[RMDB]
RNA sequence: GGGAACGACUCGAGUAGAGUCGAAAACUGUCGGUGAAUCCUCCCCUGAGAGGCCUCUUCCUAGGUCCGGAGUCUACCUCCAUCUGGUCUGUUCGGGCCCUCUUCGCCGGGGGGGCUCCUUCCCCAUUAACUCUUAUAUCUUCGGAUAUAAGAGUUAAAAAGAAACAACAACAACAAC
Reactivity to 2A3 in 0.01 (KOAc 150mM, MgCl2 10mM, bicine 150mM(pH8.5), 24C), signal-to-noise 2, nucleotides 027 to 126: c040u070g080u140c070g070g010u050g070a130a150u180c000c000u010c000c000c010c010u030g020a010g020a020g040g010c020c000u050c020u100u080c010c030u030a010g020g010u020c040c030g020g010a010g030u030c070u100a110c030c010u020c000c010a030u050c050u050g010g050u020c020u000g080u110u070c060g010g000g020c040c020c000u000c010u090u090c050g070c050c010g010g010g000g000g020g000g000c010u000c010c000u020u020c000c010c000c000a020u030
Reactivity to DMS in 0.01 (KOAc 150mM, MgCl2 10mM, bicine 150mM(pH8.5), 24C), signal-to-noise 4, nucleotides 027 to 126: c080u010g010u020c100g010g010u010g010a120a150u000c010c010u000c010c000c010c030u000g000a050g010a060g010g010c090c010u000c070u000u000c060c070u010a060g010g020u000c060c110g020g000a030g010u000c130u020a160c170c000u000c000c010a070u000c090u010g010g020u000c080u000g010u000u010c150g010g000g010c080c020c010u000c000u000u000c160g010c140c180g000g000g030g000g000g000g010c040u010c010c030u000u000c000c000c000c080a160u000
An RNA of 177 nucleotides, treated with 2A3 and DMS and read out base by base. High DMS reactivity at an A or C suggests that its Watson-Crick edge is free. The RNA was probed in 150 mM KOAc, 10 mM MgCl2 and 150 mM bicine (pH 8.5) at 24 C.